The data come from the RNA Mapping Database (RMDB), library OK1LIB.
Structure probing data (2A3 and DMS) for a 177-nucleotide construct.
For 2A3, 2,154 sequencing reads were counted.

RNA sequence: GGGAACGACUCGAGUAGAGUCGAAAAGAAGGAGAUGAAAGCGACUUUAGAAUCGGCUAACUGAGCAGCCAGAUCCAGACGGCAAGUAUCGUCGCCAGAGAUACAGUCGCAAAUAGCCGCAGGAGAAGAGUGCCUAAUACUUCGGUAUUAGGCACUCAAAAGAAACAACAACAACAAC
Reactivity to 2A3 in 0.01 (KOAc 150mM, MgCl2 10mM, bicine 150mM(pH8.5), 24C), signal-to-noise 3, nucleotides 027 to 126: g070a030a030g060g050a080g020a020u090g050a080a090a000g000c050g030a040c000u060u070u060a010g030a120a090u050c040g040g000c020u020a070a030c050u110g060a000g070c060a000g010c010c010a020g010a080u040c020c040a030g090a110c020g010g000c030a070a100g080u060a110u160c050g010u000c050g040c040c030a040g010a010g010a040u030a050c030a000g030u010c000g000c000a000a080a040u110a020g010c030c010g000c050a050g060g160a030g020a260a030
Reactivity to DMS in 0.01 (KOAc 150mM, MgCl2 10mM, bicine 150mM(pH8.5), 24C), signal-to-noise 2, nucleotides 027 to 126: g090a070a050g000g010a110g010a170u010g000a070a180a200g000c030g010a090c010u010u010u030a040g000a130a080u020c020g000g030c010u000a050a150c080u000g000a060g030c040a060g010c000c020a140g000a080u000c020c070a140g000a150c110g000g030c010a000a170g020u000a030u000c040g030u030c100g000c080c040a060g000a110g020a050u010a020c130a130g010u020c040g030c110a010a060a020u020a090g000c000c030g060c140a060g010g000a070g020a050a140